[RMDB]
RNA sequence: GGGAACGACUCGAGUAGAGUCGAAAAGUAUACGGUAGCUGCGCUCCCCUGCUAGAACCUCCAAACAAGCUCAAGGUCCAUUUGUAGGAGAACGUAGGGUAGUCAAGCUUCCAAGACUGCAGACACAGUGAUUACAUGCUUUCGAGCAUGUAAUCACAAAAGAAACAACAACAACAAC
Reactivity to 2A3 in 0.01 (KOAc 150mM, MgCl2 10mM, bicine 150mM(pH8.5), 24C), signal-to-noise 3, nucleotides 027 to 126: g070u040a050u020a090c020g010g000u010a000g000c000u000g040c030g000c090u050c010c000c000c010u000g000c000u010a020g080a080a040c000c000u020c030c030a060a140a130c020a040a070g060c030u100c150a100a110g220g070u050c070c020a100u040u020u090g020u010a000g000g010a040g000a030a010c070g000u000a030g000g000g000u000a010g000u030c030a020a020g010c000u020u010c000c000a010a000g070a030c030u090g020c060a030g030a100c040a030c010a120
Reactivity to DMS in 0.01 (KOAc 150mM, MgCl2 10mM, bicine 150mM(pH8.5), 24C), signal-to-noise 2, nucleotides 027 to 126: g010u000a040u010a030c300g000g010u010a010g000c030u000g020c230g000c010u050c060c000c010c000u020g000c020u000a050g000a150a120c080c000u000c000c010a120a060a100c050a160a090g030c040u000c150a070a080g000g010u100c070c010a240u000u000u000g000u000a080g000g000a060g000a090a120c160g020u000a050g010g010g050u010a000g000u020c060a210a020g010c000u010u010c000c010a150a150g000a080c030u000g000c120a090g000a090c190a030c150a040